[RMDB]
RNA sequence: GGGAACGACUCGAGUAGAGUCGAAAAAACGUUGCAUGAUCGUAAAACAUGCCCGGCUUACCGUGAGCCGCCUUUGCAAGAAAGGUUUACACGGACUCUGUUGCGUUACGCACGUACCUAACUUGUGAAAACGGCAUCUUGUUCGCAAGAUGCCGAACGGUGAAGGAUUGUUCGCAAUCCUUCACCGAAAAGAAACAACAACAACAAC
Reactivity to 2A3 in 0.01 (KOAc 150mM, MgCl2 10mM, bicine 150mM(pH8.5), 24C), signal-to-noise 2, nucleotides 027 to 156: a000a000c000g000u000u000g010c000a010u000g030a060u250c040g030u200a170a000a000a000c000a010u000g000c010c000c000g000g000c000u010u050a110c010c000g000u000g000a000g000c020c000g000c000c010u030u020u010g020c010a000a000g000a040a000a000g020g060u010u100u030a010c010a000c000g000g020a040c050u090c070u110g160u160u030g000c030g050u040u130a090c170g020c040a000c000g030u020a020c040c010u040a110a190c070u040u070g040u030g210a010a020a040a040c020g000g040c000a000u000c000u000u010g000u010u050c070g040c160a000a000g000a000u000g000c000c000g000a000a000
Structure probing data (2A3) for a 207-nucleotide construct. The data come from the RNA Mapping Database (RMDB), library M2RFOK. The RNA was probed in 150 mM KOAc, 10 mM MgCl2 and 150 mM bicine (pH 8.5) at 24 C.